[RMDB]
RNA sequence: GGGAACGACUCGAGUAGAGUCGAAAAGAGAAACUUCUUGAAUUCAAUUUACUAAAAAGCUAUAGUAAUCAAGACAGUGUAGUCCUGACAUAAAGAUAGGAUUAUAGUCUGGGUGUGGUGGCUCAUGCAUGACAUCAGUAUUCGUACUGAUGUCAUGAAAAGAAACAACAACAACAAC
Reactivity to 2A3 in 0.01 (KOAc 150mM, MgCl2 10mM, bicine 150mM(pH8.5), 24C), signal-to-noise 4, nucleotides 027 to 126: g050a010g040a090a200a080c030u080u050c010u030u070g090a100a090u170u040c030a050a140u120u120u130a050c030u100a060a120a150a100a020g000c010u020a020u020a160g050u060a040a080u050c010a030a000g020a030c050a030g090u040g000u100a020g020u030c010c000u050g050a040c020a090u290a100a170a010g110a070u130a020g040g000a010u030u020a040u050a050g080u000c050u050g040g020g000u090g020u030g010g080u020g010g000c010u000c050a060u130g050
Reactivity to DMS in 0.01 (KOAc 150mM, MgCl2 10mM, bicine 150mM(pH8.5), 24C), signal-to-noise 7, nucleotides 027 to 126: g000a140g010a150a130a080c050u000u000c020u000u000g000a080a150u010u010c090a120a120u010u010u010a050c030u010a030a080a090a100a080g010c110u000a060u000a050g010u000a040a030u000c030a030a020g010a030c090a060g000u010g020u000a030g010u000c000c000u010g020a070c120a130u000a050a090a120g010a090u010a030g010g010a030u000u000a030u000a050g010u010c010u000g000g000g000u000g020u000g010g020u000g010g010c040u000c080a060u000g010